The record gives the reactivity of an RNA of 177 nucleotides to DMS.
[RMDB]
RNA sequence: GGGAACGACUCGAGUAGAGUCGAAAACGACGAGCUUGGCCAGCCGGGCCUUGAAACCAUCCGCGACCAGGCCCUGAACGAGCGCGACUAUGGCGAUCUCUCCGGUCUCAACAAGGAUGACGCCCGAAUGCUAUGGGACUUUCGAGUCCCAUAGCAUAAAAGAAACAACAACAACAAC
Reactivity to DMS in 0.01 (KOAc 150mM, MgCl2 10mM, bicine 150mM(pH8.5), 24C), signal-to-noise 1, nucleotides 027 to 126: c080g060a120c020g010a130g010c040u000u020g010g000c020c030a050g040c080c100g080g000g000c000c010u000u000g000a110a090a070c080c040a050u020c080c000g040c140g000a230c060c080a050g010g010c010c000c040u010g000a020a070c070g000a040g040c000g030c080g000a070c120u040a090u000g000g000c000g020a100u010c010u000c050u010c030c030g010g030u000c050u010c060a090a070c090a030a190g010g000a050u010g000a090c070g000c010c010c160g000a130